[RMDB]
RNA sequence: GGGAACGACUCGAGUAGAGUCGAAAAAGAUGUUAAAAAAACAUCGCUAUUGACCACGGCUUCCAUUAUUUAUAUUCGUAGUUUUUACUCGAAAGCGUGAUUUUAAUAUCCAAUCUUAUUACUUUUGGAAUCGUUCAAAACCUUUGACUAAUUGUAGAACUUGUCUCAAAUUCGUUUGAGACAAGUUAAAAGAAACAACAACAACAAC
Reactivity to 2A3 in 0.01 (KOAc 150mM, MgCl2 10mM, bicine 150mM(pH8.5), 24C), signal-to-noise 1, nucleotides 027 to 156: a030g000a020u000g000u010u010a000a130a170a090a000a000a000c040a000u020c000g000c010u050a130u080u020g050a060c040c060a000c020g030g010c040u000u000c020c030a050u110u090a060u110u300u070a170u070a110u040u040c050g000u020a020g060u000u110u010u250u300a020c000u060c050g050a040a070a020g000c010g000u070g040a000u000u030u110u140a080a050u060a020u130c020c000a010a070u050c060u100u110a140u140u130a160c000u050u030u020u070g020g020a020a040u020c050g010u100u020c020a020a110a070a180c000c020u090u100u220g010a010c010u080a140a220u180u260g040u220a050g060
Record summary:
This 207-nucleotide RNA was probed chemically with 2A3. The reactions ran in a buffer of 150 mM KOAc, 10 mM MgCl2 and 150 mM bicine (pH 8.5), at 24 C.